[RMDB]
RNA sequence: GGGAACGACUCGAGUAGAGUCGAAAAAACCUUGCCGUUCACCACCGAUUCCGGUGACAAGAGUCAUCGUCGAUAUUAAUUCGUUCAGUAAAUUUUGUGGUUUUUCACCGUUUAACAAAAUCGGAGCCUCAGGAUUAUUUUUCGAAAUAAUCCUGAGAAAAGAAACAACAACAACAAC
Reactivity to 2A3 in 0.01 (KOAc 150mM, MgCl2 10mM, bicine 150mM(pH8.5), 24C), signal-to-noise 8, nucleotides 027 to 126: a000a000c010c000u020u060g040c030c010g030u040u040c030a020c060c010a020c000c020g010a020u080u030c020c000g030g030u020g020a010c020a040a140g080a040g080u030c010a010u020c010g100u020c020g010a010u030a050u140u240a110a140u090u040c020g020u040u080c040a030g080u140a040a100a210u090u100u080u090g050u040g020g000u020u020u000u050u060c040a050c020c010g020u000u050u120a170a060c090a040a070a030a060u060c010g030g020a030g050c000
Reactivity to DMS in 0.01 (KOAc 150mM, MgCl2 10mM, bicine 150mM(pH8.5), 24C), signal-to-noise 3, nucleotides 027 to 126: a060a050c030c030u000u010g000c030c030g010u010u000c040a050c040c010a100c040c070g010a100u010u010c060c030g000g010u000g020a030c050a130a090g000a120g000u000c010a020u000c040g020u000c050g000a090u020a100u020u010a060a100u000u000c020g010u010u000c050a070g020u020a080a050a080u010u020u000u020g010u010g000g020u010u000u010u020u010c050a130c030c030g030u000u020u030a060a060c170a080a040a060a050u010c010g010g010a250g000c210